[RMDB]
RNA sequence: GGGAACGACUCGAGUAGAGUCGAAAAGAUAUGGAGUUUGAAAUGGAGAAGUCGGAUCGGAAACGAUCCGUCUUCUAUGAAGUCGUACGACUCCUAAGUCAAACAUCACGAGUUCGCUCGUGAUGAAUCAAUGUGGCAUGUUCGCAUGCCACAUUGAAAAAGAAACAACAACAACAAC
Reactivity to 2A3 in 0.01 (KOAc 150mM, MgCl2 10mM, bicine 150mM(pH8.5), 24C), signal-to-noise 2, nucleotides 027 to 126: g000a000u020a010u060g010g010a060g010u040u110u150g170a160a150a040u050g000g030a030g000a000a010g010u020c020g000g000a000u010c000g000g000a000a000a010c000g010a000u010c000c010g000u010c000u000u000c000u010a300u010g000a000a000g020u010c010g020u120a050c300g000a010c000u000c020c000u000a000a010g010u010c040a080a040a130c010a010u000c000a010c010g000a010g000u120u110c280g080c130u000c000g000u020g000a000u000g020a000a040
Reactivity to DMS in 0.01 (KOAc 150mM, MgCl2 10mM, bicine 150mM(pH8.5), 24C), signal-to-noise 3, nucleotides 027 to 126: g010a020u000a050u010g000g010a010g010u000u000u000g000a090a130a020u000g000g000a020g010a010a010g010u000c000g000g000a000u000c000g010g000a020a020a040c010g000a000u000c000c000g010u000c000u000u000c000u000a150u010g000a110a170g000u000c030g000u000a130c230g010a020c000u000c000c000u000a010a120g000u000c000a130a070a230c000a000u000c000a000c000g000a010g020u000u010c260g010c010u000c000g020u000g010a000u000g000a060a080
This 177-nucleotide RNA was probed chemically with 2A3 and DMS. The RNA was probed in 150 mM KOAc, 10 mM MgCl2 and 150 mM bicine (pH 8.5) at 24 C.